Structure probing data (DMS and 2A3) for a 177-nucleotide construct. The RNA was probed in 150 mM KOAc, 10 mM MgCl2 and 150 mM bicine (pH 8.5) at 24 C. Source: RMDB library OK1LIB, as collected in RNAgym.
[RMDB]
RNA sequence: GGGAACGACUCGAGUAGAGUCGAAAAGCGCGCAAGAGCCGCUGGUCCUCCAGACCCGACGCCCGGAUCUCACACCGACCAGCGAUGUCGCUCGGUGCCGACCCGCGACCGCCACAUCGGAGGAGCCCCUAAUACCCUGAUUCGUCAGGGUAUUAGGAAAAGAAACAACAACAACAAC
Reactivity to DMS in 0.01 (KOAc 150mM, MgCl2 10mM, bicine 150mM(pH8.5), 24C), signal-to-noise 7, nucleotides 027 to 126: g000c080g030c060g020c070a130a120g000a120g000c050c000g000c000u010g010g010u000c010c040u010c150c130a070g010a070c030c020c020g020a130c150g010c080c080c030g000g000a070u010c020u000c080a110c090a100c220c160g000a040c020c030a050g010c030g010a160u030g010u030c080g000c040u010c060g010g010u000g010c050c020g000a100c050c020c010g010c040g000a070c050c030g000c050c020a060c070a090u010c050g010g000a070g000g000a090g000c040c050
Reactivity to 2A3 in 0.01 (KOAc 150mM, MgCl2 10mM, bicine 150mM(pH8.5), 24C), signal-to-noise 9, nucleotides 027 to 126: g030c030g000c000g000c060a100a100g020a020g080c000c010g000c010u010g010g020u020c010c000u030c030c010a050g020a070c000c000c010g050a060c040g120c030c070c010g030g020a070u030c030u020c030a080c010a040c050c040g020a030c010c010a010g010c010g050a060u150g070u150c040g000c020u010c020g010g020u040g030c010c020g080a120c010c010c000g020c020g030a070c010c020g030c030c010a060c010a090u090c050g030g010a030g020g030a030g020c030c000